[RMDB]
RNA sequence: GGGAACGACUCGAGUAGAGUCGAAAACAUAGGAGAUCAAAAAUGCCACCAAUAGGCAAAUAAUUACAGUAUCUAACACUUAUUGAGCAUUCGUUAUGUGUAGGGUCUUGUGUUCAGGACCUUCCCCACAGUAUCUCCCUCUGAUCUUCAAAACAAACUCACUGCUAGGUUUCGACCUAGCAGUGAGAAAAGAAACAACAACAACAAC
Reactivity to 2A3 in 0.01 (KOAc 150mM, MgCl2 10mM, bicine 150mM(pH8.5), 24C), signal-to-noise 3, nucleotides 027 to 156: c050a010u160a080g000g020a020g000a000u030c050a010a170a050a070a000u040g040c080c030a100c030c000a040a010u030a020g000g070c030a090a080a180u230a100a130u180u190a040c060a070g120u120a120u120c110u100a110a020c040a020c080u040u040a030u030u050g010a030g010c000a030u010u100c090g180u120u100a070u120g040u010g040u060a030g020g000g020u000c010u000u050g020u020g130u200u300c010a000g000g000a000c000c000u010u000c040c020c010c000a000c000a000g050u080a060u010c030u000c010c010c010u040c030u030g040a090u010c030u070u070c140a010a040a060a080c050a020a020a110
Structure probing data (2A3) for a 207-nucleotide construct. Reactivities are rounded to 0.1 and cut off at 0 and 3. 2A3 adducts were read by reverse transcription with SuperScript II with manganese. The RNA was probed in 150 mM KOAc, 10 mM MgCl2 and 150 mM bicine (pH 8.5) at 24 C. The data come from the RNA Mapping Database (RMDB), library OK3TST.